[RMDB]
RNA sequence: GGGAACGACUCGAGUAGAGUCGAAAAGGCUGCGUAUCACUCUAGGGUACGUGAUAGUGCGAUAUAAGAAGCACUGGUACAUGCCGGCAGGGACAGUCAAGAGAUGGCCGCAGUCUCGUGUCCCUGCAAAAGGAGUUCUCGUUCGCGAGAACUCCAAGAUACUAACGUCCUUCGGGACGUUAGUAUCAAAAGAAACAACAACAACAAC
Reactivity to 2A3 in 0.01 (KOAc 150mM, MgCl2 10mM, bicine 150mM(pH8.5), 24C), signal-to-noise 3, nucleotides 027 to 156: g010g010c020u020g010c040g000u000a020u020c030a060c180u130c150u230a100g070g000g000u020a010c000g010u000g030a070u060a050g010u010g000c020g030a040u020a020u030a300a090g130a100a020g000c000a000c000u000g000g040u120a100c070a050u140g020c000c000g010g000c000a000g020g000g000a010c010a030g030u140c050a160a070g000a010g000a000u030g090g100c080c060g080c090a030g010u000c000u000c000g020u000g000u000c000c000c010u000g000c000a010a010a000a000g010g000a000g000u000u010c000u000c000g030u060u080c160g000c010g090a010g010a010a000c000u000c000c000a000a000
Reactivity to DMS in 0.01 (KOAc 150mM, MgCl2 10mM, bicine 150mM(pH8.5), 24C), signal-to-noise 1, nucleotides 027 to 156: g000g010c010u010g000c030g050u000a090u000c020a130c080u000c060u000a200g010g020g020u000a000c060g000u010g000a080u010a010g020u000g000c000g040a180u000a080u010a180a190g010a180a300g010c030a040c010u000g000g030u000a060c040a150u020g000c000c010g000g060c000a010g000g000g000a000c020a120g010u000c220a080a040g010a120g010a080u000g060g010c060c090g010c070a300g000u000c020u010c000g010u000g010u000c010c000c010u000g030c020a020a000a020a060g010g020a030g040u000u020c000u000c000g010u000u010c250g020c000g000a020g000a000a000c000u000c000c010a020a080
An RNA of 207 nucleotides, treated with 2A3 and DMS and read out base by base. For 2A3, 2,657 sequencing reads were counted. Conditions: 150 mM KOAc, 10 mM MgCl2 and 150 mM bicine (pH 8.5), 24 C. Values cover nucleotides 27 to 156. As a SHAPE reagent, 2A3 marks flexible, mostly unpaired nucleotides at the ribose 2'-OH.